[RMDB]
RNA sequence: GGGAACGACUCGAGUAGAGUCGAAAAGAAACGACGUAAAGCCUCUGAACGUCGCAGGAAGAAAUAUAGGAAACCUGAGGAAACAGGAACACGCCACGUAUGCCAUAAAAGAACUAGAGGCAAGAAACAUCAGUGGGACUUUCGAGUCCCACUGAUGAAAAGAAACAACAACAACAAC
Reactivity to DMS in 0.01 (KOAc 150mM, MgCl2 10mM, bicine 150mM(pH8.5), 24C), signal-to-noise 1, nucleotides 027 to 126: g030a150a280a150c000g000a000c000g000u000a060a080a020g040c010c010u000c000u000g000a210a040c000g060u000c000g000c190a000g020g060a230a130g020a080a120a030u010a070u040a050g000g000a110a110a050c000c000u010g000a130g000g000a200a270a140c010a040g000g010a000a050c210a020c300g000c090c080a020c060g010u000a030u030g000c000c050a040u010a040a000a030a150g030a040a040c020u000a020g000a000g000g000c020a260a000g020a000a020a180
Reactivity to 2A3 in 0.01 (KOAc 150mM, MgCl2 10mM, bicine 150mM(pH8.5), 24C), signal-to-noise 1, nucleotides 027 to 126: g130a000a130a000c000g000a000c010g000u030a040a050a050g000c000c000u000c020u000g100a140a030c010g000u000c000g000c120a030g010g040a060a080g010a060a070a070u190a030u050a140g000g110a010a010a010c060c000u020g000a030g010g130a070a090a120c000a010g020g020a060a000c000a000c090g040c010c000a010c010g060u030a000u120g040c050c000a050u210a050a180a030a000g100a000a000c080u050a030g000a000g020g010c030a030a000g000a040a100a000
Chemical mapping of a 177-nucleotide RNA with DMS and 2A3. The RNA was probed in 150 mM KOAc, 10 mM MgCl2 and 150 mM bicine (pH 8.5) at 24 C.